This 207-nucleotide RNA was probed chemically with 2A3 and DMS. The DMS profile rests on 8,354 reads.
RNA sequence: GGGAACGACUCGAGUAGAGUCGAAAAACGCGUUAGUCAGAAGAGCAGUGGUAUAGUGCGAAGGUACACUGAGGGACUAGGCUGACGGUCAUAGUGCGACUGUAAACAAAGCAUGUUGUGCACCCCACACCUCCCUGCUGGACGUGGGUUCAAUUCCACACAUGUACAUGUUCGCAUGUACAUGUGUAAAAGAAACAACAACAACAAC
Reactivity to 2A3 in 0.01 (KOAc 150mM, MgCl2 10mM, bicine 150mM(pH8.5), 24C), signal-to-noise 7, nucleotides 027 to 156: a000c070g010c010g040u030u030a020g030u030c030a010g010a120a020g020a110g010c040a020g000u080g050g050u120a090u100a140g110u080g090c080g060a090a030g040g010u060a030c020a000c030u030g030a080g030g070g010a020c010u020a070g010g030c000u000g010a010c010g030g020u050c050a090u080a140g060u040g050c040g020a030c020u030g080u200a110a120a080c090a020a080a010g060c050a040u150g000u030u050g010u050g010c040a040c000c010c010c000a010c010a010c000c020u050c030c000c020u070g030c040u070g020g010a040c030g020u040g000g050g000u040u090c040a060a120u060u010c010c010
Reactivity to DMS in 0.01 (KOAc 150mM, MgCl2 10mM, bicine 150mM(pH8.5), 24C), signal-to-noise 3, nucleotides 027 to 156: a050c060g040c030g010u000u000a050g030u000c020a080g020a090a210g000a110g060c020a070g040u010g020g010u000a070u000a040g010u000g040c070g020a110a110g000g040u000a050c030a050c020u000g010a100g010g030g010a260c030u010a060g020g020c030u010g020a040c030g000g030u000c050a100u000a100g010u010g030c020g010a090c030u010g000u020a060a060a110c120a090a080a150g000c050a090u000g040u010u000g010u000g020c030a100c110c000c000c020a040c040a080c050c010u000c020c000c020u000g010c080u000g010g000a050c070g020u000g000g010g010u000u000c080a010a200u000u000c020c080